[RMDB]
RNA sequence: GGGAACGACUCGAGUAGAGUCGAAAAUGCGGUUCGACCGGGCCACCGGCCAGUGGGUGAUCGUCGCCGCACAGCGCCAGGAUCGCACCUACAAGCCGCCGGCCGCGCGCUGCCCGCUGUGUCCGGGCCAAGCAACCUAUUUCGAUAGGUUGCUUGGAAAAGAAACAACAACAACAAC
Reactivity to 2A3 in 0.01 (KOAc 150mM, MgCl2 10mM, bicine 150mM(pH8.5), 24C), signal-to-noise 8, nucleotides 027 to 126: u130g020c020g020g030u040u160c080g060a100c060c020g000g030g020c030c030a090c020c020g010g000c010c000a010g010u030g010g010g020u060g080a060u190c030g040u050c030g040c020c000g070c020a100c060a040g030c030g000c020c020a050g050g030a050u140c080g010c080a100c020c010u100a050c040a110a020g030c010c010g010c020c010g020g010c010c010g020c000g000c010g000c010u030g000c000c010c000g000c030u040g030u010g030u040c010c000g010g010g000
Reactivity to DMS in 0.01 (KOAc 150mM, MgCl2 10mM, bicine 150mM(pH8.5), 24C), signal-to-noise 5, nucleotides 027 to 126: u030g010c040g000g010u010u030c080g000a110c040c040g010g000g010c040c060a140c170c010g000g000c030c030a110g000u000g010g010g030u000g010a060u010c040g000u020c300g010c030c100g020c130a120c140a080g000c040g000c100c170a140g010g000a060u020c130g020c130a130c010c000u000a040c080a090a170g000c030c020g010c160c050g000g000c010c030g010c090g000c050g010c070u010g000c020c000c000g010c040u000g000u030g020u040c020c010g010g000g010
The record gives the reactivity of an RNA of 177 nucleotides to 2A3 and DMS. The reactions ran in a buffer of 150 mM KOAc, 10 mM MgCl2 and 150 mM bicine (pH 8.5), at 24 C. The DMS profile rests on 9,135 reads.